[RMDB]
RNA sequence: GGGAACGACUCGAGUAGAGUCGAAAAUCUCCGAGAUCCACAUCACCAUGGCCGAGGACUUCGGGGUGGAGGACCGCGGCAAGUUUUACGACGCCGUCGGUGCCCUGCGUGACGUCGUGCAAAACCAAUUAAGUACUGAUUUCGAUCAGUACUUAAUAAAAGAAACAACAACAACAAC
Reactivity to DMS in 0.01 (KOAc 150mM, MgCl2 10mM, bicine 150mM(pH8.5), 24C), signal-to-noise 9, nucleotides 027 to 126: u000c010u000c010c040g010a090g010a070u000c020c030a070c070a090u000c060a090c050c050a090u000g010g010c040c030g010a120g010g010a130c060u000u000c040g010g000g010g030u000g000g010a080g010g010a050c020c020g020c020g000g000c040a100a150g010u000u010u010u010a100c140g010a100c120g000c010c010g010u010c030g020g000u000g020c020c020c010u000g010c080g010u000g000a070c070g010u000c040g020u000g020c120a050a060a080a110c080c060a090
Reactivity to 2A3 in 0.01 (KOAc 150mM, MgCl2 10mM, bicine 150mM(pH8.5), 24C), signal-to-noise 7, nucleotides 027 to 126: u010c020u000c020c010g050a040g010a090u020c010c010a030c010a080u050c020a020c060c020a080u090g110g000c010c020g040a050g030g060a060c020u040u020c060g050g010g000g030u060g020g030a060g020g030a020c010c010g010c010g000g000c050a100a060g020u040u070u110u210a080c070g020a020c060g020c000c000g050u110c050g000g010u060g030c010c000c010u030g010c020g040u050g020a050c020g020u040c010g010u040g030c030a020a020a050a100c020c020a020